Chemical mapping of a 177-nucleotide RNA with DMS and 2A3. Source: RMDB library OK2TRN, as collected in RNAgym. Values are in units of 0.01, from 0 to 300, in steps of 10. High 2A3 reactivity points to a flexible backbone, as in loops and unpaired stretches. The reactions ran in a buffer of 150 mM KOAc, 10 mM MgCl2 and 150 mM bicine (pH 8.5), at 24 C.

RNA sequence: GGGAACGACUCGAGUAGAGUCGAAAAAUGUGGGCGAUCUCGUCCGGUGAGCUGGACGGGAACGUCUCCUCGCAGGUGACCGUCAACCGAUUGGCCGCAAUGUGUGUGUCGAAGAAGGCGCCGACGGCGCCCUACCGUGGUUCGCCACGGUAGGGCGAAAAGAAACAACAACAACAAC
Reactivity to DMS in 0.01 (KOAc 150mM, MgCl2 10mM, bicine 150mM(pH8.5), 24C), signal-to-noise 9, nucleotides 027 to 126: a060u010g020u010g010g010g010c000g010a050u000c010u000c010g010u000c000c010g000g010u010g010a150g040c030u010g010g010a010c010g010g000g010a010a040c010g020u000c010u000c070c020u000c060g020c160a120g000g010u000g010a160c010c010g000u000c030a160a080c050c030g000a200u000u000g020g010c020c020g010c030a150a100u000g020u010g020u000g010u010g020u000c020g010a040a110g010a120a140g000g000c040g010c120c080g000a020c020g000g010
Reactivity to 2A3 in 0.01 (KOAc 150mM, MgCl2 10mM, bicine 150mM(pH8.5), 24C), signal-to-noise 8, nucleotides 027 to 126: a010u150g030u190g030g010g000c010g010a040u000c000u010c000g010u000c010c010g000g020u140g060a140g100c030u030g000g000a000c000g010g010g000a010a010c000g010u000c020u030c000c000u020c030g050c070a060g010g090u050g080a130c010c000g010u020c010a040a030c010c010g080a110u030u110g030g010c030c010g060c110a230a300u200g090u040g020u000g020u010g020u260c030g050a070a050g030a070a050g140g010c030g030c050c060g030a030c020g030g020